[RMDB]
Overview: The data come from the RNA Mapping Database (RMDB), library RSTRND. An RNA of 207 nucleotides, treated with 2A3 and DMS and read out base by base. The RNA was probed in 150 mM KOAc, 10 mM MgCl2 and 150 mM bicine (pH 8.5) at 24 C.
RNA sequence: GGGAACGACUCGAGUAGAGUCGAAAACGCCCUCCAUCGCCCAUGUGGUAGGUGUCGGGACUCACUUUUAGUGGGCUACGCCUCUCACCCUCCGUCUGUGGGUGAAGGAAGAGAUUUAUCAGACUAGCCUUACGGAAGCCUGUCGCUGGGCUGAAGUACUUAUCUCACUCUUCGGAGUGAGAUAAGUAAAAGAAACAACAACAACAAC
Reactivity to 2A3 in 0.01 (KOAc 150mM, MgCl2 10mM, bicine 150mM(pH8.5), 24C), signal-to-noise 5, nucleotides 027 to 156: c010g000c010c010c000u000c000c000a010u010c010g010c000c000c000a010u010g020u010g000g030u120a020g010g010u050g100u170c030g020g010g080a090c020u040c030a080c060u080u150u100u300a030g000u000g000g010g000c000u000a000c010g000c000c000u120c000u000c030a000c010c000c000u020c010c020g010u000c000u020g000u010g000g000g000u000g010a000a000g000g000a030a000g000a000g010a020u120u210u200a080u060c010a000g010a020c020u030a040g050c020c040u050u090a020c040g030g030a050a030g030c000c020u160g130u300c140g020c200u180g000g020g000c000u000g000a020a010g020u000
Reactivity to DMS in 0.01 (KOAc 150mM, MgCl2 10mM, bicine 150mM(pH8.5), 24C), signal-to-noise 1, nucleotides 027 to 156: c010g020c010c000c000u000c020c000a030u000c020g010c010c000c000a090u010g010u010g030g010u010a010g020g020u000g020u010c020g050g020g040a260c060u000c080a220c100u030u010u040u000a000g140u010g000g000g000c020u000a210c040g010c000c010u000c120u000c010a070c000c010c000u030c050c050g030u010c050u010g030u000g000g070g050u000g010a070a040g010g040a040a070g000a240g000a170u000u010u010a160u000c000a060g020a070c010u010a130g050c010c020u000u010a160c080g000g030a300a120g030c060c030u000g010u010c040g000c030u000g010g010g000c050u000g000a110a160g010u010